[RMDB]
RNA sequence: GGGAACGACUCGAGUAGAGUCGAAAAUGCUGGAUGUUCUCCAUGGCGAAGUUGGUGUGGCGCUUGUACACGGCCUGGAAAAAGGUAACCUUGGGCUGCCCAGUCAGGUAUACAUCCUGCGCACCGUACGCGACGAGCUGCAUAAGUCCACCUGCCACUGUCAAUCUGUAUUCGUACAGAUUGACAGAAAAGAAACAACAACAACAAC
Reactivity to 2A3 in 0.01 (KOAc 150mM, MgCl2 10mM, bicine 150mM(pH8.5), 24C), signal-to-noise 3, nucleotides 027 to 156: u150g000c020u010g010g020a080u050g040u040u050c050u010c070c020a110u040g030g000c060g070a140a070g100u100u060g030g020u070g020u060g100g000c030g000c060u040u030g000u030a020c050a020c100g050g010c010c000u030g040g060a110a120a070a050a030g000g010u040a040a050c000c050u090u100g070g030g000c030u050g030c010c030c000a020g020u070c010a000g000g020u050a090u020a100c000a020u030c000c010u020g000c020g010c030a000c000c060g060u110a030c020g000c020g050a060c020g020a020g000c030u070g020c030a040u040a110a020g020u020c000c010a010c020c040u040g040c020c030a060
Reactivity to DMS in 0.01 (KOAc 150mM, MgCl2 10mM, bicine 150mM(pH8.5), 24C), signal-to-noise 1, nucleotides 027 to 156: u020g000c010u020g020g010a140u020g030u010u000c040u000c020c070a130u020g030g020c030g000a070a110g020u000u010g030g030u000g010u000g050g010c040g000c000u010u030g020u010a060c090a090c080g090g000c020c030u000g060g000a050a090a110a070a080g020g000u000a060a040c120c030u020u000g060g020g000c050u010g000c040c000c040a090g010u000c030a050g010g070u010a130u010a040c050a060u000c020c000u000g020c030g010c040a080c030c040g050u020a090c000g020c030g010a140c050g010a070g040c050u000g000c040a060u010a050a100g020u030c030c030a040c050c030u010g020c010c030a240
Chemical mapping of a 207-nucleotide RNA with 2A3 and DMS. The data come from the RNA Mapping Database (RMDB), library OK3TST. The RNA was probed in 150 mM KOAc, 10 mM MgCl2 and 150 mM bicine (pH 8.5) at 24 C. 2A3 adducts were read by reverse transcription with SuperScript II with manganese. The 2A3 profile rests on 2,533 reads. Values cover nucleotides 27 to 156.